[RMDB]
RNA sequence: GGGAACGACUCGAGUAGAGUCGAAAAAAAAUCCGCGACGUGGUCGCGUAAUUCUUCGGUGAUCUCCUUCAUCUCUUCGGUGUCGCCGACCAUGCGGUGGGUAGUACUGGCCAUCUCCGCCAUCAAGGGGCAGUGUUCUAUUCGUAGAACACUGCCCAAAAGAAACAACAACAACAAC
Reactivity to 2A3 in 0.01 (KOAc 150mM, MgCl2 10mM, bicine 150mM(pH8.5), 24C), signal-to-noise 1, nucleotides 027 to 126: a000a000a000a000u000c080c000g060c000g000a050c090g080u140g100g090u060c010g000c000g010u050a050a050u020u050c020u030u080c000g050g100u050g030a130u060c020u110c120c000u130u020c000a180u000c090u030c090u220u250c070g080g000u010g060u050c000g000c030c000g000a030c000c030a080u130g020c000g080g000u060g060g000g000u000a020g010u080a180c010u110g010g000c060c010a050u040c000u000c000c000g100c070c000a020u060c060a160a150g050